[RMDB]
RNA sequence: GGGAACGACUCGAGUAGAGUCGAAAAAUCAUGCAAGCAUGGAAUGAUUUCCAACGAAGAAUAAGAUGGCGUAUCUAUUUUUUGUUUAAGGAAGGCAUGAAUAAACCUUUUGAUCCAGAUUAUGGAGUCCUGAGUCAAGGUUCGCCUUGACUCAGGAAAAAGAAACAACAACAACAAC
Reactivity to DMS in 0.01 (KOAc 150mM, MgCl2 10mM, bicine 150mM(pH8.5), 24C), signal-to-noise 1, nucleotides 027 to 126: a070u010c000a000u000g000c000a140a020g030c120a050u000g030g040a070a090u000g020a200u070u000u000c010c000a010a040c110g020a000a010g030a000a020u000a050a060g010a000u000g000g040c300g040u010a090u000c000u000a000u000u010u010u010u000u000g000u000u000u010a080a040g000g030a040a090g000g020c050a000u000g000a040a020u050a010a020a300c110c030u000u040u050u020g000a050u000c000c010a030g000a100u010u060a030u000g000g000a130g000
Reactivity to 2A3 in 0.01 (KOAc 150mM, MgCl2 10mM, bicine 150mM(pH8.5), 24C), signal-to-noise 2, nucleotides 027 to 126: a000u010c000a020u000g030c000a000a100g070c030a210u060g130g000a170a010u100g080a050u130u000u000c000c000a020a000c000g010a000a000g050a010a000u190a300a090g010a100u030g080g300c090g150u300a050u000c000u000a000u000u010u010u010u010u010g050u030u050u030a030a030g040g060a000a000g060g000c000a000u040g090a030a070u140a080a010a040c000c000u220u120u000u080g030a040u020c000c070a090g000a300u230u170a080u230g000g000a050g000